About this RNA: Source: RMDB library OK1LIB, as collected in RNAgym. Structure probing data (DMS and 2A3) for a 177-nucleotide construct.
[RMDB]
RNA sequence: GGGAACGACUCGAGUAGAGUCGAAAAACUACUGGCUCAGAGAUCUAUCUGGUGCGGACUGUUUCAAGCCUUAUGAGGACGUUGGGGGUCUGCUUGUGACUGACUUUGUAUCUUUUAAGGUCUCCAAUGGAUGGAAUCUUUUCGAAGAUUCCAUCCAAAAAGAAACAACAACAACAAC
Reactivity to DMS in 0.01 (KOAc 150mM, MgCl2 10mM, bicine 150mM(pH8.5), 24C), signal-to-noise 2, nucleotides 027 to 126: a110c050u010a080c040u010g010g030c000u010c000a090g000a080g000a050u040c070u000a090u030c030u000g000g000u020g000c020g010g000a080c150u010g010u020u010u030c100a060a050g010c000c030u000u020a040u030g040a100g000g000a030c040g000u030u020g000g010g000g000g000u010c020u000g000c140u050u040g000u020g010a050c030u010g020a070c000u000u010u000g000u000a050u010c000u020u020u010u020a070a060g000g000u000c010u010c020c040a170a090
Reactivity to 2A3 in 0.01 (KOAc 150mM, MgCl2 10mM, bicine 150mM(pH8.5), 24C), signal-to-noise 4, nucleotides 027 to 126: a000c090u190a050c020u050g100g020c020u010c050a030g010a050g010a230u030c010u060a050u020c010u050g090g000u100g040c010g030g020a050c020u030g020u040u010u040c030a040a020g010c010c010u140u130a100u120g050a070g030g020a020c010g050u070u080g020g030g020g000g040u000c050u070g030c040u110u160g080u040g080a050c030u010g010a010c030u010u000u080g020u050a090u050c000u000u070u020u060a060a070g010g010u020c030u000c040c030a070a140
In probing experiments dimethyl sulfate is read out at A N1 and C N3, which are open when not base-paired. Conditions: 150 mM KOAc, 10 mM MgCl2 and 150 mM bicine (pH 8.5), 24 C. 2A3 adducts were read by reverse transcription with SuperScript II with manganese.